[RMDB]
RNA sequence: GGGAACGACUCGAGUAGAGUCGAAAACGGAUGGGCCGCUUCCGGCGAACGAGCCCGAAGAGCGAGUGGGGGAGAACUCCCGAGAGUUGGGAGACAGAAAGAGGGCGAGUGAUCUCGGAAGGAAUCCUUAUCUGGGGCUUCGGCCCCAGAAAAAGAAACAACAACAACAAC
Reactivity to DMS in 0.01 (KOAc 150mM, MgCl2 10mM, bicine 150mM(pH8.5), 24C), signal-to-noise 3, nucleotides 027 to 129: c050g050g010a070u040g010g000g000c070c120g050c120u000u040c020c100g000g010c160g020a000a000c190g000a210g000c100c000c030g040a070a130g040a030g030c200g000a120g010u000g000g090g090g050g020a080g000a020a060c030u080c020c010c010g100a120g000a050g070u110u120g030g010g010a090g080a000c100a140g100a030a000a210g000a240g020g020g040c060g010a080g040u080g000a040u080c030u010c060g000g010a000a000g040g040a070a160u060c070c000u000u050a050
Reactivity to 2A3 in 0.01 (KOAc 150mM, MgCl2 10mM, bicine 150mM(pH8.5), 24C), signal-to-noise 2, nucleotides 027 to 129: c000g010g000a040u060g030g050g000c060c060g000c040u080u030c010c010g000g000c040g000a100a020c110g010a060g020c020c060c000g010a110a030g020a010g000c150g020a020g020u260g000g120g000g000g000a060g010a010a010c000u000c020c000c000g020a050g020a020g040u250u180g000g000g000a000g060a000c040a010g020a030a000a070g050a040g000g000g000c020g000a040g030u160g000a020u000c030u120c010g000g050a000a000g090g000a020a000u000c000c000u060u030a120